RNA sequence: GGGAACGACUCGAGUAGAGUCGAAAAGCUGAGUAUACGAGGUUAGUUCAUUCUCGUAUCCAUGAUUGGACAAAUUAAAAUCUCAAUUUGGAUCAGGGCCUCCCUCCAGCGACGGCCGAACAUACAAGAAGUAGUUAUCAUUCGUGAUAACUACUUCAAAAGAAACAACAACAACAAC
Reactivity to DMS in 0.01 (KOAc 150mM, MgCl2 10mM, bicine 150mM(pH8.5), 24C), signal-to-noise 9, nucleotides 027 to 126: g020c010u000g000a100g010u000a050u000a020c020g010a020g000g010u000u000a090g010u010u010c100a080u010u000c000u000c010g010u000a020u000c020c030a040u010g010a050u000u000g010g000a050c090a040a050a090u010u000a050a070a100a090u010c060u010c050a020a020u000u000u000g000g000a070u010c040a070g000g000g010c020c010u000c020c010c030u000c100c050a070g010c060g000a070c150g010g000c010c020g010a020a020c060a080u010a110c220a060a090
Reactivity to 2A3 in 0.01 (KOAc 150mM, MgCl2 10mM, bicine 150mM(pH8.5), 24C), signal-to-noise 7, nucleotides 027 to 126: g030c000u030g020a010g060u120a020u010a070c010g010a010g030g030u070u100a050g050u140u150c030a040u150u010c010u000c010g000u010a010u010c010c010a090u160g020a070u040u060g020g020a010c040a040a110a030u150u180a100a140a080a140u060c070u010c110a020a030u020u020u040g050g000a060u040c030a040g070g000g000c000c010u010c010c000c000u050c040c020a030g010c020g070a070c050g010g000c010c000g000a020a010c030a040u190a040c050a050a050
An RNA of 177 nucleotides, treated with DMS and 2A3 and read out base by base. DMS adducts were read by reverse transcription with MarathonRT. Conditions: 150 mM KOAc, 10 mM MgCl2 and 150 mM bicine (pH 8.5), 24 C. It was measured as part of the RMDB library M2PK90. The 2A3 profile rests on 16,286 reads.